[RMDB]
Structure probing data (2A3 and DMS) for a 177-nucleotide construct. The RNA was probed in 150 mM KOAc, 10 mM MgCl2 and 150 mM bicine (pH 8.5) at 24 C. Reactivities are given for positions 27 through 126. It was measured as part of the RMDB library TTRDES. High 2A3 reactivity points to a flexible backbone, as in loops and unpaired stretches. The 2A3 profile rests on 3,900 reads. For DMS the reverse transcriptase was MarathonRT.
RNA sequence: GGGAACGACUCGAGUAGAGUCGAAAAGAUAUGGACCGAACAAUAGAGUGGGAGCCUGCACUCGGAAACGAGUGGCAGGCAUCGAUCACUCCGGUCCUAAGUCAAAACGACACCUUCGGGUGUCGAACAAAUGUCAUUCGUUCGCGAAUGACAUUUGAAAAGAAACAACAACAACAAC
Reactivity to 2A3 in 0.01 (KOAc 150mM, MgCl2 10mM, bicine 150mM(pH8.5), 24C), signal-to-noise 2, nucleotides 027 to 126: g010a000u020a010u080g010g000a000c000c000g030a210a120c140a300a300u270a140g000a000g050u020g020g190g080a080g000c000c000u010g030c000a010c010u000c000g000g000a020a020a010c000g000a000g000u050g110g030c000a010g020g010c000a000u040c010g000a020u010c010a000c010u000c000c020g020g000u000c000c000u000a020a000g010u010c000a010a000a160a170c020g000a000c010a010c020c050u040u140c300g150g000g020u000g000u000c000g020a020a000
Reactivity to DMS in 0.01 (KOAc 150mM, MgCl2 10mM, bicine 150mM(pH8.5), 24C), signal-to-noise 2, nucleotides 027 to 126: g000a030u000a100u000g000g000a010c030c000g000a150a220c300a100a110u000a150g020a040g010u000g000g020g020a190g050c000c010u000g010c010a030c000u000c020g040g000a000a010a010c010g000a020g010u000g040g020c010a010g040g020c000a000u020c230g000a140u020c000a000c000u000c020c000g000g000u000c000c000u020a000a090g000u000c010a090a040a070a200c050g000a020c000a000c000c000u000u010c180g030g000g000u000g030u010c010g010a040a120